[RMDB]
RNA sequence: GGGAACGACUCGAGUAGAGUCGAAAAGCGGCAUCGGCCAUCUUCACGAGCGUCGCGUCCGAGUGCGCGAUGUGCUCGUGCGACGUGACGAGGCCGAUGCUGACGGUCACGCGCGCAUACGGGCUGAACGAUCGAGGUGAUUCGUCACCUCGAUCGUAAAAGAAACAACAACAACAAC
Reactivity to DMS in 0.01 (KOAc 150mM, MgCl2 10mM, bicine 150mM(pH8.5), 24C), signal-to-noise 2, nucleotides 027 to 126: g000c020g050g000c000a010u000c010g020g000c000c000a160u010c050u000u000c070a030c020g000a300g000c020g000u000c000g000c010g020u000c100c150g030a160g010u000g010c000g000c140g000a060u000g010u000g020c000u000c000g020u010g000c240g000a080c050g020u000g000a070c130g010a120g000g000c000c000g010a000u030g000c010u000g000a060c020g000g000u000c040a060c080g010c040g020c060g040c140a040u010a050c080g000g030g000c060u020g000a060
Reactivity to 2A3 in 0.01 (KOAc 150mM, MgCl2 10mM, bicine 150mM(pH8.5), 24C), signal-to-noise 2, nucleotides 027 to 126: g070c020g000g000c000a000u010c000g000g020c020c010a300u040c020u110u060c050a040c000g050a040g000c030g020u000c000g000c010g030u020c030c070g200a080g030u120g020c060g000c080g100a070u170g110u120g080c020u000c010g000u000g010c000g000a100c060g070u170g040a050c040g020a060g030g000c000c020g000a000u010g000c000u000g000a000c000g030g000u070c010a000c060g020c000g000c000g000c040a010u080a110c050g050g050g030c030u040g070a060